Structure probing data (2A3) for a 177-nucleotide construct.

RNA sequence: GGGAACGACUCGAGUAGAGUCGAAAAAAAGUUAUUUUUGAGAACCAAGAUUAUUUUCAUGCAAAUUUUGUUGAGUGGAAAAUUGCUACUGAACCUAAUUUUGAUGUUGAUUUGGAUCUUGAUUUGAAUGACUCGAUAUGUUCGCAUAUCGAGUCAUAAAAGAAACAACAACAACAAC
Reactivity to 2A3 in 0.01 (KOAc 150mM, MgCl2 10mM, bicine 150mM(pH8.5), 24C), signal-to-noise 2, nucleotides 027 to 126: a000a000a000g150u130u030a270u120u030u040u070u280g030a010g000a050a030c000c000a000a000g000a000u000u000a030u000u230u060u020c030a040u050g000c000a000a060a050u000u000u000u060g000u020u040g070a000g000u010g000g230a000a000a110a160u080u200g010c000u020a000c000u000g070a010a010c000c000u010a020a010u000u000u030u030g010a040u240g050u000u030g040a090u000u000u100g130g000a060u000c000u000u090g040a130u020u090u170g090a150
It was measured as part of the RMDB library OK1LIB.